RNA sequence: GGGAACGACUCGAGUAGAGUCGAAAAGAUAUGGAACGUCACCCAGCUUGGACCGUACUGUCGGAAACGAUUACGCUAGCUGACAAGUCGUUCCUAAGUCAAAGUUAUUACCUUCGGGUAAUAACAACGAGACGUAGUACUUCGGUACUACGUCUCGAAAAGAAACAACAACAACAAC
Reactivity to 2A3 in 0.01 (KOAc 150mM, MgCl2 10mM, bicine 150mM(pH8.5), 24C), signal-to-noise 2, nucleotides 027 to 126: g020a010u090a070u160g000g000a020a000c010g000u000c010a020c090c060c000a000g000c010u090u210g060g080a150c090c100g020u060a090c120u230g070u080c020g040g070a040a090a090c020g010a020u050u090a030c050g000c100u040a010g010c000u010g000a040c040a190a290g010u000c010g020u040u000c000c000u000a130a030g030u020c070a240a080a000g010u010u000a000u000u010a020c010c020u000u060c300g090g000g000u010a010a010u010a010a020c040a000a060
Reactivity to DMS in 0.01 (KOAc 150mM, MgCl2 10mM, bicine 150mM(pH8.5), 24C), signal-to-noise 2, nucleotides 027 to 126: g000a050u000a300u000g000g010a000a010c010g000u000c080a090c300c100c000a010g020c010u000u000g000g010a230c300c080g000u000a010c300u060g060u000c010g000g000a080a010a210c020g000a040u000u010a030c010g000c030u000a010g010c010u000g000a040c100a070a140g000u000c000g000u010u000c000c000u000a010a030g000u000c020a130a070a140g000u000u000a000u000u000a030c000c000u000u000c130g020g000g040u000a000a000u000a000a010c000a060a090
The record gives the reactivity of an RNA of 177 nucleotides to 2A3 and DMS. The data come from the RNA Mapping Database (RMDB), library TTRDEL. Conditions: 150 mM KOAc, 10 mM MgCl2 and 150 mM bicine (pH 8.5), 24 C.